[RMDB]
RNA sequence: GGGAACGACUCGAGUAGAGUCGAAAAUACGAUAAUCAGAAGAAGCCGAACAUCAUGGCAGAUGUAACACUGAGUGAAUUGAAAGAGGUUCGCGUGCAGUAUGAUGACCUAAGAGAGGGAGCCAGGCCAUAGUUGGCAGGUUCGCCUGCCAACUAUGAAAAGAAACAACAACAACAAC
Reactivity to DMS in 0.01 (KOAc 150mM, MgCl2 10mM, bicine 150mM(pH8.5), 24C), signal-to-noise 4, nucleotides 027 to 126: u010a050c130g000a050u050a080a080u020c020a040g010a070a110g000a100a160g000c010c010g010a110a080c050a060u010c040a070u010g010g000c080a070g050a040u000g000u020a070a090c130a070c030u010g010a130g010u000g020a070a050u010u000g000a070a090a120g000a090g010g000u000u000c040g010c060g000u000g000c070a070g000u000a030u020g000a060u010g000a060c010c020u010a060a090g010a080g000a090g000g010g000a080g010c040c020a060g000g040c120
Reactivity to 2A3 in 0.01 (KOAc 150mM, MgCl2 10mM, bicine 150mM(pH8.5), 24C), signal-to-noise 5, nucleotides 027 to 126: u210a030c020g010a030u140a120a090u120c060a050g130a200a010g030a070a020g100c020c000g050a070a040c040a130u110c020a020u100g130g000c050a040g030a050u060g070u100a050a030c020a000c110u070g020a020g060u070g050a050a090u090u080g070a080a100a020g090a040g010g060u070u030c050g000c050g030u080g030c020a000g010u110a030u150g090a080u060g060a060c000c010u040a080a030g070a000g010a010g060g000g000a010g000c000c020a020g030g010c000